[RMDB]
RNA sequence: GGGAACGACUCGAGUAGAGUCGAAAAGCACCGUGAGGGAGACAACCCAGAGUUAGGUUAAGGUCCCAAAGUGCGAGCUAAGUGCGAUUGAAGGUGGUCUCGAGCCCUAGACAGCCGGGAGGUGAGCUAUUAGAUCCCUGUUCGCAGGGAUCUAAUAAAAAGAAACAACAACAACAAC
Reactivity to 2A3 in 0.01 (KOAc 150mM, MgCl2 10mM, bicine 150mM(pH8.5), 24C), signal-to-noise 5, nucleotides 027 to 126: g030c000a010c040c020g080u050g060a140g000g040g020a040g020a060c030a050a030c030c000c040a050g060a020g220u190u250a050g000g040u020u070a110a010g070g090u020c000c000c000a020a030a010g070u070g010c020g010a030g000c050u090a100a020g050u030g080c040g050a090u020u120g060a040a030g030g010u050g020g030u010c010u010c020g030a050g000c000c000c000u060a060g030a090c020a030g030c010c010g000g020g010a020g020g010u060g010a010g010c020
Reactivity to DMS in 0.01 (KOAc 150mM, MgCl2 10mM, bicine 150mM(pH8.5), 24C), signal-to-noise 6, nucleotides 027 to 126: g010c030a030c020c060g000u030g010a300g000g000g000a060g010a100c070a050a070c040c000c060a170g020a150g010u010u030a070g010g000u010u010a090a080g000g010u000c000c010c010a050a150a120g010u000g010c020g010a090g010c040u000a060a100g010u020g010c040g010a070u010u020g000a090a090g010g010u000g010g010u020c020u000c050g000a090g000c040c010c010u000a060g000a070c120a110g020c020c020g000g010g000a100g000g020u010g000a070g000c090